[RMDB]
RNA sequence: GGGAACGACUCGAGUAGAGUCGAAAAUCUUCUUGCCGGUUCAUUUGACAAAGUCUAUGAUAUUGGCAAUCCUAAAGGAAUUCCUAUUGUUGAUGACCCUGUGGUUGAUUGGCAUUAUUUUGAUGCAUAGCGGGAGAGUUCGCUCUCCCGAAAAGAAACAACAACAACAAC
Reactivity to 2A3 in 0.01 (KOAc 150mM, MgCl2 10mM, bicine 150mM(pH8.5), 24C), signal-to-noise 4, nucleotides 027 to 129: u000c030u080u020c000u010u020g000c010c030g030g000u000u000c000a060u190u060u070g080a070c090a140a170a030g030u000c000u000a020u010g010a050u000a000u210u090g000g000c000a000a040u050c050c020u220a100a060a040g020g000a020a110u060u040c010c000u050a030u110u240g070u030u060g000a090u040g110a110c000c020c010u040g070u040g040g000u040u000g020a280u030u030g060g030c000a000u000u090a040u020u200u030u170g050a010u000g010c040a000u060a070g050